Annotation:
This 177-nucleotide RNA was probed chemically with DMS and 2A3. The RNA was probed in 150 mM KOAc, 10 mM MgCl2 and 150 mM bicine (pH 8.5) at 24 C. For 2A3 the reverse transcriptase was SuperScript II with manganese.
RNA sequence: GGGAACGACUCGAGUAGAGUCGAAAAGAGGGUUGGUUCGCCAACCCUCCAUUAAAAUCAGCGGUAAAUAAUUAGCAGGCGUUACGGCUGAACGCCUGCAUAGACUCAGUCUGUUCGCAGACUGAAAGUUCUUAAAGUAGUUCGCUACUUUAAGAACAAAAGAAACAACAACAACAAC
Reactivity to DMS in 0.01 (KOAc 150mM, MgCl2 10mM, bicine 150mM(pH8.5), 24C), signal-to-noise 5, nucleotides 027 to 126: g000a010g010g010g020u000u000g000g010u010u020c220g030c010c000a000a010c000c000c000u000c000c020a050u010u010a070a060a110a080u000c010a010g000c010g030g010u000a040a050a040u010a050a060u010u010a130g010c000a010g000g000c000g000u000u010a060c120g010g000c020u000g000a060a040c010g000c000c000u000g020c010a030u010a060g000a150c170u000c000a000g000u000c000u000g010u000u010c180g020c000a010g000a010c000u000g010a010a050a080
Reactivity to 2A3 in 0.01 (KOAc 150mM, MgCl2 10mM, bicine 150mM(pH8.5), 24C), signal-to-noise 7, nucleotides 027 to 126: g020a010g020g010g010u010u010g020g010u050u120c160g040c070c000a000a000c000c000c000u000c000c000a000u010u030a010a010a000a050u040c000a000g020c020g250g070u060a040a050a060u110a060a140u230u250a060g000c000a000g000g010c000g020u020u060a050c050g110g000c020u010g010a000a000c000g000c000c000u000g000c000a000u010a000g010a010c020u000c020a000g000u000c000u010g030u020u070c190g010c080a000g000a010c000u000g010a000a000a010